[RMDB]
RNA sequence: GGGAACGACUCGAGUAGAGUCGAAAAACUCAAGUGAUGCUAUCUAGCUUGAAUUUUGGUCAUCUUUGAUAGUGUAGAUUGAAAAUUGACAACUUUUAAUCGAAGUUAAAGUCUUAGUCUAGCUUGAAAUUUUGGAAGGUGAGUUUAGCCAGAUGAAUCAACCUAUUGACUUCGGUCAAUAGGUUGAAAAAGAAACAACAACAACAAC
Reactivity to DMS in 0.01 (KOAc 150mM, MgCl2 10mM, bicine 150mM(pH8.5), 24C), signal-to-noise 1, nucleotides 027 to 156: a030c030u000c010a010a010g050u010g010a300u010g020c020u000a010u000c010u010a300g010c000u000u010g010a010a040u040u000u000u000g040g060u000c060a110u000c190u000u000u010g010a060u010a020g010u000g000u000a060g010a030u010u010g000a010a010a010a010u000u000g010a070c050a180a200c100u000u000u000u000a000a060u000c070g000a150a040g000u000u010a060a080a110g000u010c010u000u000a140g010u000c010u000a040g010c010u000u000g010a120a120a090u000u000u000u000g010g000a100a040g020g000u000g000a060g010u000u010u010a140g040c000c010a050g000a060u000g010a090a190
Reactivity to 2A3 in 0.01 (KOAc 150mM, MgCl2 10mM, bicine 150mM(pH8.5), 24C), signal-to-noise 3, nucleotides 027 to 156: a000c010u000c000a010a010g000u010g010a000u050g000c010u000a000u000c000u000a010g000c010u010u000g010a050a090u080u080u100u200g130g020u120c050a110u060c190u180u190u170g000a000u000a010g020u030g030u020a010g000a000u000u020g010a020a000a020a040u020u020g010a030c020a020a000c060u020u020u030u030a020a040u010c020g010a010a000g010u050u200a160a080a060g000u000c000u030u150a030g000u000c040u020a040g000c030u030u080g080a110a150a170u210u220u090u120g100g020a060a030g040g030u070g020a040g020u010u100u080a010g000c000c030a020g010a060u070g050a040a050
This 207-nucleotide RNA was probed chemically with DMS and 2A3. It was measured as part of the RMDB library RSTRND. 2A3 adducts were read by reverse transcription with SuperScript II with manganese. Conditions: 150 mM KOAc, 10 mM MgCl2 and 150 mM bicine (pH 8.5), 24 C.